[RMDB]
An RNA of 177 nucleotides, treated with 2A3 and DMS and read out base by base.

RNA sequence: GGGAACGACUCGAGUAGAGUCGAAAACCGGUGAAUGUCGGCCGUAACUAUAACGGUCCUAAGGUAGCGAAAUUCCUUGUCGGGUAAGUUCCGACCUGCACGAAUCGUGAAACGAGUUGGGCACUGUCUAAUACUAACCGUUCGCGGUUAGUAUUAGAAAAGAAACAACAACAACAAC
Reactivity to 2A3 in 0.01 (KOAc 150mM, MgCl2 10mM, bicine 150mM(pH8.5), 24C), signal-to-noise 6, nucleotides 027 to 126: c020c010g010g020u150g090a250a150u170g050u080c040g010g010c010c000g030u030a100a050c100u090a070u060a300a020c000g010g020u030c000c020u070a070a050g040g000u010a000g010c030g050a030a060a130u070u050c000c000u010u080g010u010c010g000g010g040u100a100a060g090u170u040c000c000g000a000c000c000u070g000c070a060c080g060a040a090u180c030g020u040g090a030a030a050c070g020a070g120u030u020g000g020g010c080a020c110u020g030u010
Reactivity to DMS in 0.01 (KOAc 150mM, MgCl2 10mM, bicine 150mM(pH8.5), 24C), signal-to-noise 4, nucleotides 027 to 126: c010c000g020g010u000g000a100a060u020g020u000c130g000g010c010c010g010u010a080a140c150u000a120u030a070a050c020g010g000u010c010c050u010a060a060g010g010u000a110g010c040g020a050a090a100u000u010c010c010u000u000g020u000c030g010g010g000u000a060a150g010u020u030c010c020g000a020c010c040u010g000c050a050c100g010a030a040u010c020g000u010g010a070a120a110c090g000a080g000u000u000g010g010g010c070a110c080u010g020u000